[RMDB]
Background:
Structure probing data (DMS and 2A3) for a 207-nucleotide construct. For 2A3 the reverse transcriptase was SuperScript II with manganese. The RNA was probed in 150 mM KOAc, 10 mM MgCl2 and 150 mM bicine (pH 8.5) at 24 C. The 2A3 profile rests on 1,868 reads. For DMS, 1,643 sequencing reads were counted.
RNA sequence: GGGAACGACUCGAGUAGAGUCGAAAAGCCAACGACGAGCGUUUCGCUCUCGCCGCUUAAGCGGUGAGCCGCUGCACUGAUCUGUCCUUGGGUCAGGCGGGGGAAGGCAACUUCCCAGGGGGCAACCCCGAACCGCAGCAGCGACAUUCACAAGGAACUAUUCAAGGAGGUUCGCCUCCUUGAAUAGAAAAGAAACAACAACAACAAC
Reactivity to DMS in 0.01 (KOAc 150mM, MgCl2 10mM, bicine 150mM(pH8.5), 24C), signal-to-noise 1, nucleotides 027 to 156: g000c030c020a070a070c040g010a050c010g010a010g010c080g040u000u010u000c040g000c010u000c030u000c010g050c010c010g000c060u020u010a130a110g050c000g080g020u000g010a070g020c030c000g020c020u000g000c010a300c010u000g000a040u000c010u000g030u000c160c140u010u000g030g000g010u000c000a090g020g080c060g030g000g010g030g020a060a020g000g010c200a110a160c010u000u010c040c000c020a260g000g000g000g000g000c300a110a160c010c000c000c020g000a020a110c010c020g070c000a160g000c050a010g040c020g000a030c010a100u000u000c050a050c010a090a190g020g000a100a290
Reactivity to 2A3 in 0.01 (KOAc 150mM, MgCl2 10mM, bicine 150mM(pH8.5), 24C), signal-to-noise 2, nucleotides 027 to 156: g000c020c010a030a030c080g200a020c030g010a010g010c010g030u020u070u030c020g030c020u020c010u000c020g000c020c000g030c070u300u300a300a030g010c010g000g000u010g010a010g020c030c020g000c000u000g010c000a000c030u010g010a000u000c000u010g040u010c010c000u010u000g010g000g000u000c000a000g000g060c010g000g000g000g010g000a000a000g010g010c080a100a050c000u000u000c000c000c010a000g000g010g010g000g030c070a050a140c000c000c000c000g000a020a000c020c000g000c010a030g000c000a000g000c000g060a060c050a170u190u300c110a020c000a020a000g000g000a010a030